Source information:
An RNA of 177 nucleotides, treated with 2A3 and read out base by base. Source: RMDB library OK1LIB, as collected in RNAgym. The reactions ran in a buffer of 150 mM KOAc, 10 mM MgCl2 and 150 mM bicine (pH 8.5), at 24 C. For 2A3 the reverse transcriptase was SuperScript II with manganese.
[RMDB]
RNA sequence: GGGAACGACUCGAGUAGAGUCGAAAACAAACAAAACAACAAACCUCUCGUCAAGAAAGACGUGAGGAACAAUUCCGCGCCCAAGUAUGCCAAGCGCGGGUGGCAUACAAACAAAACAAAAACAAAAGAUGUCGUAAGACUUCGGUCUUACGACAUCAAAAGAAACAACAACAACAAC
Reactivity to 2A3 in 0.01 (KOAc 150mM, MgCl2 10mM, bicine 150mM(pH8.5), 24C), signal-to-noise 1, nucleotides 027 to 126: c000a000a110a040c080a010a120a040a070c120a010a010c110a060a150a010c000c000u000c000u000c010g000u050c000a060a060g030a130a100a000g000a000c000g000u000g000a000g000g020a000a020c000a000a000u050u000c000c040g020c000g010c000c000c000a010a000g030u010a000u010g000c000c000a020a000g110c080g000c000g040g010g000u050g000g000c000a000u000a010c000a010a100a030c150a040a100a060a000c110a040a050a080a040a000c030a000a140a000a000